[RMDB]
RNA sequence: GGGAACGACUCGAGUAGAGUCGAAAAGCUGAUCAAGCAAUUGCUCGACAUCGGCGCGCAGACCCUGCUGGUACCGAUGGUCGACAGCGCCGCCCAGGCCGAAGGGCUGGUGCGCGCCGUGCGCUAACAUACGCCUAAAUUUCGAUUUAGGCGUAUGAAAAGAAACAACAACAACAAC
Reactivity to DMS in 0.01 (KOAc 150mM, MgCl2 10mM, bicine 150mM(pH8.5), 24C), signal-to-noise 9, nucleotides 027 to 126: g010c020u000g000a120u010c130a130a070g020c080a170a120u010u000g010c070u000c020g010a120c040a040u000c020g000g010c020g020c020g020c010a060g000a120c040c020c030u000g000c070u010g020g020u000a060c040c060g000a100u010g010g020u000c040g010a070c070a080g000c040g010c030c040g010c020c000c040a160g010g010c010c020g010a170a080g000g000g020c050u000g010g010u000g010c010g010c010g010c000c040g020u000g010c080g010c070u000a080a210
Reactivity to 2A3 in 0.01 (KOAc 150mM, MgCl2 10mM, bicine 150mM(pH8.5), 24C), signal-to-noise 9, nucleotides 027 to 126: g030c020u040g030a290u180c100a080a020g050c030a080a230u190u180g030c070u060c070g050a060c030a080u070c030g000g000c010g000c010g000c030a010g050a300c030c010c010u030g020c030u060g010g040u090a140c010c040g060a090u150g000g080u030c020g040a050c020a040g030c020g010c030c020g000c000c010c010a020g030g050c010c000g090a060a050g060g000g000c060u100g100g140u080g020c010g000c000g000c000c010g020u020g010c050g010c030u030a080a020
An RNA of 177 nucleotides, treated with DMS and 2A3 and read out base by base. Conditions: 150 mM KOAc, 10 mM MgCl2 and 150 mM bicine (pH 8.5), 24 C. For 2A3, 20,548 sequencing reads were counted.